RNA sequence: GGGAACGACUCGAGUAGAGUCGAAAACAACGCGUAAAAAAAGCAACUGCGUGCUCCCCACCGAGUCACUCAGUUCUCUUCCGAUUGCCAUCAUCAUCGGCGCAGCGUCAUCAUGCCGCCUGUGGGGGCGUCCAUAUUAGUUCGCUAAUAUGGACGCAAAAGAAACAACAACAACAAC
Reactivity to 2A3 in 0.01 (KOAc 150mM, MgCl2 10mM, bicine 150mM(pH8.5), 24C), signal-to-noise 9, nucleotides 027 to 126: c040a010a040c030g050c060g080u210a090a070a030a030a030a030a050g060c040a040a050c020u060g010c010g020u010g020c010u030c010c040c000c010a020c010c050g030a020g100u130c020a020c050u030c010a020g000u080u010c030u010c000u110u040c020c020g080a090u030u110g030c030c020a070u080c010a030u030c000a020u040c070g020g000c020g000c030a030g020c000g060u050c010a070u030c000a020u130g060c020c010g020c000c010u050g010u080g010g020g000g040
Reactivity to DMS in 0.01 (KOAc 150mM, MgCl2 10mM, bicine 150mM(pH8.5), 24C), signal-to-noise 5, nucleotides 027 to 126: c100a110a090c080g010c060g000u040a020a000a040a060a050a080a110g020c300a060a040c090u000g020c060g020u010g010c060u000c020c000c020c060a040c120c060g000a070g020u020c040a080c040u000c030a090g010u010u000c010u000c020u010u000c020c030g000a060u020u010g010c030c030a100u020c090a070u010c050a050u020c090g000g000c060g000c060a060g010c070g030u000c040a060u040c070a080u010g000c050c020g000c030c040u010g020u000g000g010g000g030
An RNA of 177 nucleotides, treated with 2A3 and DMS and read out base by base.
Source: RMDB library OK1LIB, as collected in RNAgym.
The reactions ran in a buffer of 150 mM KOAc, 10 mM MgCl2 and 150 mM bicine (pH 8.5), at 24 C.
2A3 adducts were read by reverse transcription with SuperScript II with manganese.